[RMDB]
RNA sequence: GGGAACGACUCGAGUAGAGUCGAAAAGCGGAAAAGAGUGCGUGGUAGCACAAACCAUACCAAUCCGCGGCACAAGGUCGCACAUGCACAGCUUCGCCUGUGCAAAGCGAACAAGGCGAAGAAAGAAAGCCAUGCGUAAUUUCGAUUACGCAUGGCUAAAAGAAACAACAACAACAAC
Reactivity to 2A3 in 0.01 (KOAc 150mM, MgCl2 10mM, bicine 150mM(pH8.5), 24C), signal-to-noise 3, nucleotides 027 to 126: g010c010g030g010a010a040a080a040g200a070g000u050g000c090g020u040g040g070u120a030g060c090a000c080a170a000a000c040c020a070u190a050c030c000a010a030u010c000c000g000c000g010g040c020a020c010a190a120g110g000u000c000g020c020a020c020a070u050g030c000a000c030a010g020c010u180u140c120g030c020c000u050g010u000g000c020a000a050a000g020c000g000a060a030c010a070a020g030g000c030g070a060a000g050a060a070a040g150a030a170
Reactivity to DMS in 0.01 (KOAc 150mM, MgCl2 10mM, bicine 150mM(pH8.5), 24C), signal-to-noise 3, nucleotides 027 to 126: g020c010g000g000a030a060a170a080g010a170g020u000g060c200g030u000g010g030u000a150g030c070a070c100a050a090a050c110c030a280u010a230c050c030a120a150u000c000c000g000c000g010g000c110a130c010a050a210g000g000u000c000g000c000a050c080a300u000g000c000a000c030a030g000c040u010u090c210g040c190c000u020g000u000g000c000a010a060a160g010c030g010a010a040c010a010a170g020g000c000g000a060a070g000a150a070a070g000a140a110